[RMDB]
RNA sequence: GGGAACGACUCGAGUAGAGUCGAAAAGGUCUACUUUUACAAAAGUUCAAGGUUUGGAAAACAUUGCUUUUAAUGUUGUUAAACAAGGCCAUUUUAUUGGUGUUGAGGGUGAACUACCUGUAGCUGUAAAUCUUGAUGUUCGCAUCAAGAAAAAGAAACAACAACAACAAC
Reactivity to 2A3 in 0.01 (KOAc 150mM, MgCl2 10mM, bicine 150mM(pH8.5), 24C), signal-to-noise 5, nucleotides 027 to 129: g010g000u000c000u000a060c000u030u030u040u060a080c040a000a110a020a030g000u020u030c000a030a040g100g040u020u060u170g170g030a060a080a030a000c040a040u040u130g080c050u150u110u070u090a070a060u090g020u090u020g060u060u090a030a030a030c050a030a070g030g000c010c010a010u050u080u050u090a210u090u080g000g000u060g070u060u080g020a050g050g040g000u040g020a040a020c000u040a020c050c000u010g030u040a030g000c040u040g010u080a000a030a130
Reactivity to DMS in 0.01 (KOAc 150mM, MgCl2 10mM, bicine 150mM(pH8.5), 24C), signal-to-noise 7, nucleotides 027 to 129: g000g010u000c010u040a040c080u010u020u000u060a080c170a080a040a070a040g010u010u020c010a070a100g020g030u000u020u060g030g010a050a030a010a020c030a050u010u030g020c260u010u010u020u010a030a030u020g010u000u020g020u000u010a030a040a030c060a100a060g000g000c030c010a000u010u010u010u010a110u020u020g000g000u000g000u000u000g000a120g030g000g030u070g020a050a060c040u030a050c070c010u020g030u000a050g000c000u020g030u000a050a070a070
Structure probing data (2A3 and DMS) for a 170-nucleotide construct. 2A3 adducts were read by reverse transcription with SuperScript II with manganese. The reactions ran in a buffer of 150 mM KOAc, 10 mM MgCl2 and 150 mM bicine (pH 8.5), at 24 C. Source: RMDB library 15KLIB, as collected in RNAgym.